[RMDB]
RNA sequence: GGGAACGACUCGAGUAGAGUCGAAAAAGAAAUCCAGGAGGACAAGCCGUCCCUGUUUGCCCGCGUCACGGCGCUGUUUACCAAAAAAGAGCAGUCCGAUGACGUCCGGUUCUCUGAUGUGCAUAAGGCCGUGGAACUGGUCGCCACUGAGCAGCAGGCGUACAUCAUUCUUCGGAAUGAUGUACGCAAAAGAAACAACAACAACAAC
Reactivity to 2A3 in 0.01 (KOAc 150mM, MgCl2 10mM, bicine 150mM(pH8.5), 24C), signal-to-noise 1, nucleotides 027 to 156: a010g070a010a030a020u040c060c020a020g090g050a080g030g040a050c060a150a020g120c080c020g060u020c000c000c000u030g050u040u080u050g050c000c000c000g000c010g000u000c000a010c020g040g000c110g000c110u020g070u000u070u120a120c060c050a090a040a000a000a080a120g020a000g000c000a000g000u040c000c020g060a180u000g000a000c000g040u020c040c010g090g000u100u000c020u010c030u100g090a080u030g130u120g020c000a060u110a270a130g120g000c000c020g010u110g060g000a030a090c060u110g030g000u010c000g030c060c000a040c080u050g050a030g050c020a030g110c000a000g110